[RMDB]
RNA sequence: GGGAACGACUCGAGUAGAGUCGAAAAGGUCGUCCACUCCGAUCGAGCCACUAGGAGCUAUCGGAACUCUUAGCGGAGUGACCAAAUCUCUCGACUUCAGUUGGACAUCGUGAGAUCGAGGUCCAAAGACGUUGCAUGGGUUCGCCUAUGUAACGUCAAAAGAAACAACAACAACAAC
Reactivity to DMS in 0.01 (KOAc 150mM, MgCl2 10mM, bicine 150mM(pH8.5), 24C), signal-to-noise 9, nucleotides 027 to 126: g010g000u000c010g010u020c070c060a070c030u010c020c020g010a100u020c130g000a110g010c040c040a300c100u010a060g000g000a030g030c040u020a100u030c230g010g020a100a170c030u010c020u000u000a070g000c110g000g000a030g010u020g010a060c030c010a060a100a080u010c050u000c020u000c020g020a060c110u010u020c080a120g020u010u020g000g000a060c170a090u000c010g010u020g000a140g000a050u010c020g000a080g000g000u010c010c020a020a060a080
Reactivity to 2A3 in 0.01 (KOAc 150mM, MgCl2 10mM, bicine 150mM(pH8.5), 24C), signal-to-noise 9, nucleotides 027 to 126: g020g000u020c010g020u020c040c010a020c020u000c010c000g040a090u110c090g050a020g070c030c020a070c060u090a060g050g020a060g020c020u080a090u190c070g060g050a050a050c010u010c010u050u050a020g040c020g040g010a030g020u060g020a010c000c010a020a080a070u040c040u000c000u020c020g070a070c010u110u070c130a160g040u100u090g040g010a010c010a040u010c010g020u040g090a080g010a060u120c020g030a030g010g020u000c000c000a020a030a020
The data come from the RNA Mapping Database (RMDB), library OK1LIB. Structure probing data (DMS and 2A3) for a 177-nucleotide construct. The reactions ran in a buffer of 150 mM KOAc, 10 mM MgCl2 and 150 mM bicine (pH 8.5), at 24 C. For 2A3, 146,874 sequencing reads were counted. For DMS, 29,052 sequencing reads were counted.